[RMDB]
RNA sequence: GGGAACGACUCGAGUAGAGUCGAAAAGAGCAGAAGGAAGACCCUUGUCGAGGCCAGAGAAAUAAGUUUGCCAGGAUACGUGGACAGACUUGGGGUCUUGUUUCCAGAGGCGGUACAUCCUUUAGUUAACGUCUUGUCAGCUUCUUGUCUCACGGCCCUUAGCUUGUUUUUUCGAAAACAAGCUAAGAAAAGAAACAACAACAACAAC
Reactivity to DMS in 0.01 (KOAc 150mM, MgCl2 10mM, bicine 150mM(pH8.5), 24C), signal-to-noise 4, nucleotides 027 to 156: g000a120g010c060a110g000a060a060g010g020a080a070g010a030c010c010c010u000u010g010u000c040g020a120g010g020c020c010a180g010a140g000a110a110a130u010a030a040g010u000u000u000g010c010c020a150g020g020a210u000a080c150g030u000g030g010a020c020a040g010a030c030u010u000g010g010g030g010u000c010u010u000g010u000u000u000c020c030a160g010a080g010g000c020g030g000u000a050c050a080u010c060c050u000u000u010a090g000u000u000a040a050c030g010u000c020u000u000g000u000c040a130g000c010u000u000c020u010u000g000u000c020u000c030a110c090g010g010c030c050
Reactivity to 2A3 in 0.01 (KOAc 150mM, MgCl2 10mM, bicine 150mM(pH8.5), 24C), signal-to-noise 2, nucleotides 027 to 156: g030a000g000c050a020g010a070a010g070g050a030a020g020a010c000c020c000u050u070g120u050c060g040a060g000g030c010c010a020g040a000g050a060a100a050u150a050a020g020u050u080u060g000c020c000a030g060g050a130u120a220c110g060u080g010g020a050c010a020g000a010c000u040u060g020g000g010g010u010c000u020u020g060u020u040u030c030c010a030g000a020g090g000c020g000g030u070a020c020a060u210c060c000u120u190u130a040g010u030u070a090a020c010g000u000c000u030u050g070u060c020a020g000c010u080u020c000u060u090g060u010c000u000c010a040c040g020g010c020c030
This 207-nucleotide RNA was probed chemically with DMS and 2A3. Values are in units of 0.01, from 0 to 300, in steps of 10. The 2A3 profile rests on 4,839 reads. For DMS the reverse transcriptase was MarathonRT. 2A3 adducts were read by reverse transcription with SuperScript II with manganese.